[RMDB]
Annotation
Source: RMDB library PDB130, as collected in RNAgym. This 207-nucleotide RNA was probed chemically with 2A3. The reactions ran in a buffer of 150 mM KOAc, 10 mM MgCl2 and 150 mM bicine (pH 8.5), at 24 C.
RNA sequence: GGGAACGACUCGAGUAGAGUCGAAAACAGUUAAGGUCCCCAAAUAUAUGUUAAGUGGAAAAGGAUGUGGGGUUGCUUAGACAACCAGGAUGUUGGCUUAGAAGCAGCCACCAUUGAAAGAGUGCGUAAUAGCUCACUGGUCGAGUGACCCCGCGCCGCUAUAUCGCCUGUUCGCAGGCGAUAUAGCAAAAGAAACAACAACAACAAC
Reactivity to 2A3 in 0.01 (KOAc 150mM, MgCl2 10mM, bicine 150mM(pH8.5), 24C), signal-to-noise 1, nucleotides 027 to 156: c000a000g020u130u200a110a080g060g040u010c000c000c000c030a000a120a010u210a040u070a040u140g040u190u130a160a100g040u130g020g040a040a080a130a110g030g010a150u170g010u040g010g010g020g020u000u000g020c000u030u050a050g020a110c110a060a030c050c000a000g020g000a000u020g000u020u000g020g000c000u010u020a040g010a140a010g040c020a000g000c010c000a010c000c000a000u010u050g000a010a020a000g000a000g000u050g000c040g000u050a100a000u030a070g010c000u000c000a000c000u010g000g020u000c020g000a000g020u010g000a000c000c010c000c000g000c000g000c000c000